[RMDB]
RNA sequence: GGGAACGACUCGAGUAGAGUCGAAAACAGUUCUGGCGGUUGGUUAAAGGCCUCUGGAAUGUAUCGUCCUCCGGGACGUCUUAUAGCCAGGGGCGCAAUGCGGCCAGCCGGGACUGAGGAACGCGCUGAGUGGAAUUGUCUUCGGACAAUUCCACUCAAAAGAAACAACAACAACAAC
Reactivity to 2A3 in 0.01 (KOAc 150mM, MgCl2 10mM, bicine 150mM(pH8.5), 24C), signal-to-noise 1, nucleotides 027 to 126: c000a000g000u010u000c000u000g000g000c000g000g020u010u080g040g000u110u120a010a010a000g020g000c000c000u090c000u020g020g020a190a140u020g050u110a090u100c000g020u010c000c000u000c110c130g050g000g000a000c010g000u000c050u090u070a070u070a030g120c030c000a000g000g000g000g000c000g010c020a000a000u010g010c010g000g000c060c030a090g000c010c000g000g010g000a000c000u000g040a110g060g080a080a010c090g000c000g050c090u010